[RMDB]
RNA sequence: GGGAACGACUCGAGUAGAGUCGAAAAGCGUUGAUAGUGAUAGAUACCGAGUGGUAGUUGCCUUUGCUGCUUGGUUUUACCGUUGGGGUGUAGUCACCUGGCGCAUGGCGCUGUACCACUUCAACCACACCGUAUUACGAUUCGUCGUAAUACGGUGAAAAGAAACAACAACAACAAC
Reactivity to DMS in 0.01 (KOAc 150mM, MgCl2 10mM, bicine 150mM(pH8.5), 24C), signal-to-noise 8, nucleotides 027 to 126: g020c140g010u000u000g000a130u000a050g010u010g010a110u000a040g010a190u000a060c040c040g010a050g030u000g010g010u000a020g010u010u010g040c030c020u010u000u000g020c010u010g030c010u000u000g000g000u000u030u000u000a030c030c030g010u010u010g020g010g010g000u010g010u000a040g010u010c200a030c010c020u000g000g010c000g010c020a030u000g010g010c020g000c050u010g000u000a040c030c000a010c010u000u000c080a040a100c030c060a300
Reactivity to 2A3 in 0.01 (KOAc 150mM, MgCl2 10mM, bicine 150mM(pH8.5), 24C), signal-to-noise 7, nucleotides 027 to 126: g040c030g000u030u040g070a090u100a110g070u060g060a050u050a140g100a040u070a100c040c030g010a020g000u030g000g000u010a020g020u050u300g030c010c000u160u100u100g010c070u060g000c000u000u020g000g000u020u030u020u030a010c010c010g100u130u300g170g110g000g000u110g020u050a050g070u090c010a010c000c010u010g000g010c000g000c010a020u020g020g000c020g000c030u030g050u040a030c000c000a000c000u020u020c020a010a020c020c010a020